[RMDB]
RNA sequence: GGGAACGACUCGAGUAGAGUCGAAAAGUGACGAGUUGCAGACGGACCGUGAGAACGGUCAUGGAGCAGCUUAUCGGCGUGCUCCAUCAACUUCGGGAAGAAAUGAGUUGCCCUUCGUACGCCGUGACUAGUGGUUAGUAUUCGUACUAGCUACUAGAAAAGAAACAACAACAACAAC
Reactivity to DMS in 0.01 (KOAc 150mM, MgCl2 10mM, bicine 150mM(pH8.5), 24C), signal-to-noise 9, nucleotides 027 to 126: g010u010g010a110c090g000a030g010u000u000g010c020a150g010a210c140g000g000a010c000c000g010u000g000a250g000a180a020c000g000g000u000c000a010u000g000g000a070g010c000a120g000c040u000u000a070u010c130g010g010c010g010u000g010c000u000c040c020a000u000c020a020a020c030u000u000c060g000g000g010a130a100g000a060a080a090u010g000a070g000u000u000g000c020c020c020u000u000c070g010u000a050c040g010c010c010g010u000g010a180
Reactivity to 2A3 in 0.01 (KOAc 150mM, MgCl2 10mM, bicine 150mM(pH8.5), 24C), signal-to-noise 9, nucleotides 027 to 126: g120u080g040a030c020g000a010g000u010u010g000c020a020g050a180c040g020g000a000c000c000g000u010g030a090g010a040a010c000g000g000u000c000a000u000g010g000a000g000c000a000g000c010u040u050a150u080c030g010g000c010g050u030g000c000u000c000c000a000u010c000a000a000c000u090u070c030g020g030g060a080a040g040a030a100a050u170g010a020g030u030u040g040c010c000c000u020u030c010g010u010a020c010g000c010c000g020u020g040a020

This 177-nucleotide RNA was probed chemically with DMS and 2A3. It was measured as part of the RMDB library OK2TRN. 2A3 adducts were read by reverse transcription with SuperScript II with manganese. High DMS reactivity at an A or C suggests that its Watson-Crick edge is free.